[RMDB]
RNA sequence: GGGAACGACUCGAGUAGAGUCGAAAAGAUAUGGACCUUCUACCCACCGCAAGUGUGCGAAGAACUCGGAAACGAGGGAGCACGCUUGCGAGGAAGGUCCUAAGUCAAAGCGGCGUUCGCGCCGCAACUAUUAGGCUAUGUUCGCAUAGCCUAAUAGAAAAGAAACAACAACAACAAC
Reactivity to 2A3 in 0.01 (KOAc 150mM, MgCl2 10mM, bicine 150mM(pH8.5), 24C), signal-to-noise 5, nucleotides 027 to 126: g090a060u220a240u300g000g000a000c000c010u020u050c010u130a300c020c010c010a010c000c020g000c000a000a000g000u000g000u010g010c000g160a300a050g020a080a050c000u000c010g020g050a070a060a050c010g000a010g020g000g000a010g000c000a000c000g010c010u000u000g000c000g000a000g000g000a000a010g000g000u010c000c000u010a020a010g070u050c090a090a050a070g000c010g010g010c020g040u070u170c260g010c010g000c120c000g000c000a010a000
Reactivity to DMS in 0.01 (KOAc 150mM, MgCl2 10mM, bicine 150mM(pH8.5), 24C), signal-to-noise 7, nucleotides 027 to 126: g010a100u020a200u010g010g010a000c000c000u000u000c010u000a120c020c010c030a300c130c010g000c000a010a010g010u000g020u000g020c000g000a080a160g000a120a130c000u000c000g000g000a080a070a160c010g000a010g000g000g010a090g010c000a010c000g000c000u010u010g000c000g000a020g010g010a020a010g000g020u000c000c000u000a000a080g010u020c110a070a080a110g010c000g010g000c000g020u000u010c160g010c020g010c000c000g010c010a010a030
The record gives the reactivity of an RNA of 177 nucleotides to 2A3 and DMS. The DMS profile rests on 13,139 reads. The 2A3 profile rests on 18,449 reads. It was measured as part of the RMDB library TTRDEL. Conditions: 150 mM KOAc, 10 mM MgCl2 and 150 mM bicine (pH 8.5), 24 C.